[RMDB]
RNA sequence: GGGAACGACUCGAGUAGAGUCGAAAAUCGCGUCUUCUUAGUGGCCGUGGCGCCCGCUUCGCUUCCUAUCUCUGCGCCUGGCUCAAUACGUUUGGAUGGUGGACGCUCAGUGCGUCACAGGUGGCCUUCAUGACCGACUUUAUCUUAUCCAUGCGCCGGUACCACAUAUGUUCGCAUAUGUGGUACCAAAAGAAACAACAACAACAAC
Reactivity to 2A3 in 0.01 (KOAc 150mM, MgCl2 10mM, bicine 150mM(pH8.5), 24C), signal-to-noise 3, nucleotides 027 to 156: u090c050g000c030g070u010c000u140u000c010u040u140a090g010u120g050g010c030c040g060u040g020g020c010g020c000c010c010g050c030u070u060c020g040c040u040u100c020c030u080a100u140c110u020c070u140g000c000g000c000c000u020g010g000c020u000c060a050a080u150a090c050g040u010u040u050g040g000a040u030g030g150u100g090g010a010c010g020c000u030c030a120g050u120g050c000g020u000c020a000c050a120g050g020u030g000g020c000c040u030u110c050a090u100g030a050c030c050g040a040c030u060u060u020a100u060c030u080u090a030u070c000c020a020u080g070c030g090c040c050
Reactivity to DMS in 0.01 (KOAc 150mM, MgCl2 10mM, bicine 150mM(pH8.5), 24C), signal-to-noise 1, nucleotides 027 to 156: u010c010g020c050g000u000c080u040u000c040u000u000a130g050u000g040g030c000c080g030u010g020g000c060g020c000c050c050g020c060u020u000c040g030c060u000u000c030c000u000a110u010c070u000c020u000g000c040g020c040c000u000g030g050c010u000c050a060a080u010a040c020g050u000u010u010g010g010a060u000g000g000u010g010g000a050c030g000c050u000c040a170g060u000g030c000g040u000c000a080c130a110g000g040u010g000g010c000c020u030u000c070a070u000g010a060c010c030g010a100c070u020u000u000a040u010c090u000u000a080u000c020c050a130u000g000c040g070c050c150
An RNA of 207 nucleotides, treated with 2A3 and DMS and read out base by base. Source: RMDB library OK3TST, as collected in RNAgym. DMS adducts were read by reverse transcription with MarathonRT. 2A3 adducts were read by reverse transcription with SuperScript II with manganese. For DMS, 2,741 sequencing reads were counted. For 2A3, 1,826 sequencing reads were counted.